Conditions: 150 mM KOAc, 10 mM MgCl2 and 150 mM bicine (pH 8.5), 24 C. The record gives the reactivity of an RNA of 177 nucleotides to DMS and 2A3.
[RMDB]
RNA sequence: GGGAACGACUCGAGUAGAGUCGAAAAGAAAGAAAUCUGUUAAGCGUACUAAUGUAGUCUCGUGAAAACGGGACGCUUAACAGUCCACCAUGCGUGGAGAAACACGAAAAUAAAUAAAAAUGGUGCAGGGUAAGAUUAUCUUCGGAUAAUCUUACCCAAAAGAAACAACAACAACAAC
Reactivity to DMS in 0.01 (KOAc 150mM, MgCl2 10mM, bicine 150mM(pH8.5), 24C), signal-to-noise 2, nucleotides 027 to 126: g060a060a070a200g000a080a130a160u110c000u000g000u010u000a000a000g030c010g000u080a050c090u000a150a180u060g030u020a170g000u000c000u000c000g000u000g010a010a010a190a060c000g040g030g000a110c020g000c000u000u000a000a030c000a000g000u000c290c000a040c000c000a050u000g000c000g000u000g000g000a180g000a200a050a180c000a000c030g000a070a000a020a240u050a060a160a010u050a060a110a050a000a000u010g000g000u000g000c230a210
Reactivity to 2A3 in 0.01 (KOAc 150mM, MgCl2 10mM, bicine 150mM(pH8.5), 24C), signal-to-noise 3, nucleotides 027 to 126: g060a020a040a000g090a010a110a050u040c000u000g010u000u000a000a000g000c010g040u030a040c090u280a210a210u300g030u130a110g020u010c030u010c010g000u030g120a070a050a010a010c000g020g000g000a000c000g000c000u000u000a000a000c000a000g000u000c000c000a030c000c000a010u070g030c050g010u020g040g070a070g190a050a100a010c060a010c010g100a050a040a050a010u240a090a060a020u240a020a090a030a000a000u010g000g010u030g030c080a070
Reactivities are given for positions 27 through 126. DMS adducts were read by reverse transcription with MarathonRT.